An RNA of 207 nucleotides, treated with DMS and 2A3 and read out base by base.
RNA sequence: GGGAACGACUCGAGUAGAGUCGAAAAGACGGCAGUUCGGAACUAUAAGGACAACGAACACAUCCCAAGUUGUCCUUAUAACUGGACUGAGUACAGUUAGUUGUAUAGCAUACUCUUGGGAUGUGUUGUAUGCUAUAUAGUUCUAACUGUACUGUCAUAAUUAGCCAUCAUUCGUGAUGGCUAAUUAAAAAGAAACAACAACAACAAC
Reactivity to DMS in 0.01 (KOAc 150mM, MgCl2 10mM, bicine 150mM(pH8.5), 24C), signal-to-noise 5, nucleotides 027 to 156: g010a070c030g000g020c010a040g020u000u000c020g020g010a080a120c170u000a020u000a020a030g000g000a040c020a030a030c010g010a120a090c060a050c040a140u000c010c010c000a080a300g010u000u000g000u000c000c010u000u000a010u000a020a150c020u000g010g010a040c010u000g010a110g020u000a030c010a060g000u000u000a020g020u000u000g020u000a020u000a020g000c020a040u000a040c010u000c110u000u000g020g020g040a050u000g020u000g030u000u000g010u000a010u000g000c000u000a040u000a020u000a060g010u000u000c010u000a010a020c000u000g020u000a010c010u000g010u000c030a230
Reactivity to 2A3 in 0.01 (KOAc 150mM, MgCl2 10mM, bicine 150mM(pH8.5), 24C), signal-to-noise 7, nucleotides 027 to 156: g010a000c010g010g020c010a000g000u010u020c020g050g010a110a070c050u010a010u000a020a010g010g000a020c000a020a010c030g150a150a010c080a010c000a070u020c010c010c010a040a050g010u010u010g000u000c000c000u000u000a000u000a010a010c000u010g020g000a000c010u010g030a010g040u020a020c000a000g000u000u000a010g010u060u300g010u010a010u020a010g000c000a010u010a030c010u020c010u100u060g000g000g010a010u010g010u000g010u030u080g000u010a010u000g000c000u000a000u000a000u000a030g060u060u050c000u000a000a000c000u000g000u000a020c010u020g000u000c000a000
Values cover nucleotides 27 to 156. The DMS profile rests on 20,890 reads. The data come from the RNA Mapping Database (RMDB), library OK3TST.